[RMDB]
RNA sequence: GGGAACGACUCGAGUAGAGUCGAAAAGGGGGUGAUCAGCACAGCCUUCGAAUCAUUAUUUUGUUCGGGAAUUUUAAAACCGAUACCGGGUGAACUGGUCGUGUUGGACCCCGAACCACCCGCUCGCCAAAGCAACUGAUUUCGAUCAGUUGCUUUGAAAAGAAACAACAACAACAAC
Reactivity to 2A3 in 0.01 (KOAc 150mM, MgCl2 10mM, bicine 150mM(pH8.5), 24C), signal-to-noise 1, nucleotides 027 to 126: g010g000g000g030g030u120g100a080u060c040a050g020c030a010c020a000g030c020c000u030u070c030g100a100a070u020c010a010u000u180a140u000u300u050u080g070u050u020c010g020g100g060a050a040u230u190u130u250a270a190a080a030c000c000g000a010u080a090c080c000g160g000g020u000g010a040a000c030u010g000g000u000c010g000u030g010u030u010g000g020a010c000c000c000c000g000a030a020c000c000a080c010c040c020g070c070u060c050g000c020
Reactivity to DMS in 0.01 (KOAc 150mM, MgCl2 10mM, bicine 150mM(pH8.5), 24C), signal-to-noise 3, nucleotides 027 to 126: g020g010g010g010g020u010g010a090u000c010a030g030c000a040c050a130g000c010c000u000u000c170g010a130a120u000c020a030u000u010a130u010u010u010u010g010u000u000c000g000g010g040a090a130u010u020u020u000a040a090a170a130c020c000g010a010u010a050c160c270g010g010g000u000g000a050a080c040u000g000g010u010c050g020u010g020u010u010g000g010a080c060c000c030c000g020a020a100c130c140a110c050c020c010g000c100u000c080g030c300